[RMDB]
RNA sequence: GGGAACGACUCGAGUAGAGUCGAAAACCGCUUUCGAGCGGGCGGACGCGUACUACGAGGAGGUCCGAUAGCGAUAAGUAAAGUCCCAAAUAGGACUUUACUUUUGACGCUACAGGACUACCCACCCUCGUAUCGCAUUUUUGAACUUCGGUUCAAAUACACGUUGCAAAUUCGUUUGCAACGUGUAAAAAGAAACAACAACAACAAC
Reactivity to 2A3 in 0.01 (KOAc 150mM, MgCl2 10mM, bicine 150mM(pH8.5), 24C), signal-to-noise 3, nucleotides 027 to 156: c010c000g010c020u080u100u130c230g090a030g020c010g000g060g000c100g080g050a120c130g040c030g030u170a180c040u010a010c020g020a000g020g000a010g000g020u000c000c000g000a010u010a010g000c000g030a040u010a050a000g000u000a000a010a000g000u000c000c030c080a110a210a160u300a070g010g010a000c000u030u000u000a000c000u030u030u000u070g050a020c030g000c000u000a010c050a110g000g010a000c010u030a040c020c040c010a030c010c000c000u010c030g000u020a040u210c000g020c000a030u070u070u000u040u030g000a000a000c010u020u080c260g060g000u020u010c000a000a020a000
Reactivity to DMS in 0.01 (KOAc 150mM, MgCl2 10mM, bicine 150mM(pH8.5), 24C), signal-to-noise 2, nucleotides 027 to 156: c020c000g010c010u000u010u000c270g040a040g080c000g020g000g010c060g000g030a080c060g000c020g000u000a080c080u000a020c010g000a030g030g000a190g000g010u000c010c000g030a090u000a030g000c000g000a160u000a030a020g010u000a000a020a020g020u000c000c000c040a050a140a300u030a060g030g010a000c000u000u000u000a000c000u000u000u010u020g010a300c100g000c010u000a000c080a300g060g000a030c010u000a080c010c010c030a300c150c010c010u000c000g000u000a010u000c020g000c030a090u000u000u000u000u000g020a030a000c010u010u000c300g050g040u010u010c020a020a050a230
The data come from the RNA Mapping Database (RMDB), library RNAMAK.
The record gives the reactivity of an RNA of 207 nucleotides to 2A3 and DMS.
For 2A3 the reverse transcriptase was SuperScript II with manganese.